The data come from the RNA Mapping Database (RMDB), library TTRDEL. This 177-nucleotide RNA was probed chemically with 2A3 and DMS. 2A3 is a SHAPE reagent: it acylates the 2'-hydroxyl of flexible nucleotides of all four kinds. The RNA was probed in 150 mM KOAc, 10 mM MgCl2 and 150 mM bicine (pH 8.5) at 24 C.
RNA sequence: GGGAACGACUCGAGUAGAGUCGAAAAGAUAUGGAGCAUGGACAUGCUCGAGGGAUCGGAAACGAUCCGUAGAGCAACAGCCCGCUGCUCCUAAGUCAAAAGGAGUCUCACUUCGGUGAGACUCCAAGAUACCAAGUAGCUUCGGCUACUUGGUAUCAAAAGAAACAACAACAACAAC
Reactivity to 2A3 in 0.01 (KOAc 150mM, MgCl2 10mM, bicine 150mM(pH8.5), 24C), signal-to-noise 2, nucleotides 027 to 126: g040a010u090a050u180g000g020a010g000c020a050u130g040g000a070c020a090u110g000c000u010c000g000a130g030g000g000a000u000c010g010g020a130a030a070c010g000a000u020c020c000g000u000a000g010a000g000c010a000a020c010a000g020c000c000c020g030c020u000g000c020u000c010c000u010a140a050g070u050c020a030a000a020a170g000g000a010g000u000c000u000c000a020c020u060u180c300g040g010u000g000a000g000a000c000u000c010c000a010a000
Reactivity to DMS in 0.01 (KOAc 150mM, MgCl2 10mM, bicine 150mM(pH8.5), 24C), signal-to-noise 4, nucleotides 027 to 126: g000a030u010a300u000g000g000a000g020c000a030u010g010g000a010c050a240u000g010c000u000c000g010a240g000g000g000a000u000c000g010g010a150a110a280c000g000a010u010c000c010g000u000a300g000a010g000c010a020a100c240a120g000c010c000c000g020c260u000g000c020u000c000c010u000a000a090g010u010c040a050a080a160a080g010g010a050g010u000c000u000c000a010c000u000u000c200g020g010u000g010a010g000a010c000u000c000c010a000a010
DMS adducts were read by reverse transcription with MarathonRT. The DMS profile rests on 3,238 reads.